[RMDB]
RNA sequence: GGGAACGACUCGAGUAGAGUCGAAAAGAAAACGGCAGCAAGCCGAGCAAGUAGAGCAACGCGAGCAAGAUCAGCAACGCGAGCAACAUGAGCAACAUGAGCAAGAUCAGCAACUACACCAAAAAAAGAAUACAGGCAGAUUCGUCUGCCUGUAUUCAAAAGAAACAACAACAACAAC
Reactivity to 2A3 in 0.01 (KOAc 150mM, MgCl2 10mM, bicine 150mM(pH8.5), 24C), signal-to-noise 1, nucleotides 027 to 126: g080a000a090a010a030c010g030g020c030a060g080c080a230a040g000c000c060g040a010g000c040a090a060g030u060a030g020a020g070c070a000a120c050g000c050g070a020g090c010a080a010g060a160u100c050a020g000c040a070a120c010g000c040g040a030g040c030a010a050c000a020u070g010a070g070c020a020a070c010a080u060g030a010g040c040a050a010g000a030u050c020a000g000c000a040a040c020u060a050c010a030c050c000a000a080a040a000a000a000a000
Reactivity to DMS in 0.01 (KOAc 150mM, MgCl2 10mM, bicine 150mM(pH8.5), 24C), signal-to-noise 2, nucleotides 027 to 126: g010a050a070a140a110c050g020g010c040a060g000c110a120a120g030c000c030g000a130g010c050a030a110g000u000a040g000a150g000c030a030a090c090g010c050g030a090g000c010a060a010g020a100u000c040a000g000c030a060a080c080g000c070g010a100g030c020a090a030c090a030u010g010a090g000c040a040a050c030a030u000g000a210g030c030a030a040g000a080u020c070a040g000c030a070a070c060u000a030c030a050c010c060a000a000a070a010a030a050a160